[RMDB]
RNA sequence: GGGAACGACUCGAGUAGAGUCGAAAAGCUCUUGCGGCCAAUCGCAUCAACUCGAAGGUUGAUAAGAGCGCAGACCUAGAAAAGCCAGAGACGGCUUAUAAGGCAGUCACGUCCGCAGUAUCGGAUGACUAAAGCGAUAUUUCGAUAUCGCUUUAGUAAAAGAAACAACAACAACAAC
Reactivity to DMS in 0.01 (KOAc 150mM, MgCl2 10mM, bicine 150mM(pH8.5), 24C), signal-to-noise 9, nucleotides 027 to 126: g000c010u000c000u000u000g010c030g020g010c020c020a090a150u010c020g010c230a300u020c230a070a110c160u020c040g010a080a170g000g000u000u000g010a070u020a020a040g010a030g000c010g010c150a070g010a140c010c010u010a080g010a090a120a050a040g000c010c020a070g000a160g000a150c130g000g000c010u000u000a060u030a100a080g000g010c040a070g000u010c040a190c050g010u000c000c010g020c220a110g010u030a070u030c020g000g000a040u010g000
Reactivity to 2A3 in 0.01 (KOAc 150mM, MgCl2 10mM, bicine 150mM(pH8.5), 24C), signal-to-noise 9, nucleotides 027 to 126: g010c000u010c000u020u040g010c010g010g020c020c030a100a210u080c020g030c050a170u140c060a100a100c060u030c080g070a090a040g050g010u000u000g020a220u040a090a020g010a000g000c010g000c030a030g030a100c000c010u040a030g120a090a180a010a000g010c010c020a060g030a030g030a290c080g020g010c000u020u010a060u030a030a020g040g030c020a010g050u090c050a020c100g010u000c000c010g010c060a060g040u070a090u210c020g010g000a020u050g030